[RMDB]
RNA sequence: GGGAACGACUCGAGUAGAGUCGAAAAGGCACCUUAGUGGUGAAAUCCUAUGGAUAUGCUGAUCGCAAUAGCGAGGACGUAGUCACCGCACUUGCCAGGAAGUUUGUUAGAGUGUCUGCGGCCAGGCUAGCUACCAGUUAUUCGUAACUGGUAGCUAAAAAGAAACAACAACAACAAC
Reactivity to DMS in 0.01 (KOAc 150mM, MgCl2 10mM, bicine 150mM(pH8.5), 24C), signal-to-noise 5, nucleotides 027 to 126: g000g000c020a020c000c010u010u020a130g000u010g000g030u000g010a060a080a110u000c010c010u000a090u010g010g010a120u010a080u010g010c010u000g000a150u000c080g010c050a080a100u000a060g020c020g020a180g010g010a030c020g020u000a050g010u000c010a020c000c020g010c080a060c040u000u000g000c050c100a090g000g000a070a040g010u010u010u000g020u000u010a090g000a140g010u000g000u000c010u000g010c020g000g000c020c020a070g010g010c050
Reactivity to 2A3 in 0.01 (KOAc 150mM, MgCl2 10mM, bicine 150mM(pH8.5), 24C), signal-to-noise 1, nucleotides 027 to 126: g090g020c030a090c000c030u120u180a210g080u180g060g000u000g030a040a040a050u050c000c010u060a160u130g090g040a100u060a070u300g000c000u070g050a080u060c020g000c090a160a300u030a140g020c010g070a020g060g010a000c000g030u040a020g000u060c000a000c010c000g000c020a060c060u020u030g170c070c040a040g050g070a020a050g040u110u240u200g040u240u300a150g030a000g000u030g000u040c000u040g020c000g000g060c010c010a040g040g020c030

Description: The record gives the reactivity of an RNA of 177 nucleotides to DMS and 2A3. For DMS the reverse transcriptase was MarathonRT. Values cover nucleotides 27 to 126.